[RMDB]
RNA sequence: GGGAACGACUCGAGUAGAGUCGAAAACGGUUAAUUCAGCAAAAGGUAGUUACACUAUUAUCGAAGGCUUUACUUAAAGGUGAUAUUAAACCAGACACUUCUAUAGAGUUAACUAUGUCCAAAGAUGCCAAGACAAAUAGUUCGCUAUUUGUCUUGGAAAAGAAACAACAACAACAAC
Reactivity to 2A3 in 0.01 (KOAc 150mM, MgCl2 10mM, bicine 150mM(pH8.5), 24C), signal-to-noise 2, nucleotides 027 to 126: c060g000g020u060u030a070a000u160u010c040a040g030c060a080a060a020a010g080g020u020a020g010u070u050a070c040a020c090u040a060u200u030a030u050c040g030a010a020g070g000c000u270u180u120a080c030u100u230a120a070a050g050g010u040g030a060u070a070u210u180a190a080a010c030c000a020g030a030c100a050c150u050u000c000u020a050u040a150g010a000g020u000u000a010a000c010u020a050u060g080u000c010c030a030a070a030g090a020u170g030
Reactivity to DMS in 0.01 (KOAc 150mM, MgCl2 10mM, bicine 150mM(pH8.5), 24C), signal-to-noise 3, nucleotides 027 to 126: c140g030g000u010u000a010a030u000u000c020a090g040c140a080a090a090a110g010g010u000a040g000u000u000a080c140a150c100u000a030u000u010a030u000c060g000a100a080g020g020c150u010u020u020a080c100u000u000a050a070a120g010g020u000g010a090u000a040u010u000a090a140a100c090c030a210g030a150c130a090c030u000u000c010u000a240u000a120g000a090g000u000u000a010a030c020u000a120u000g010u020c010c010a040a110a100g010a120u010g010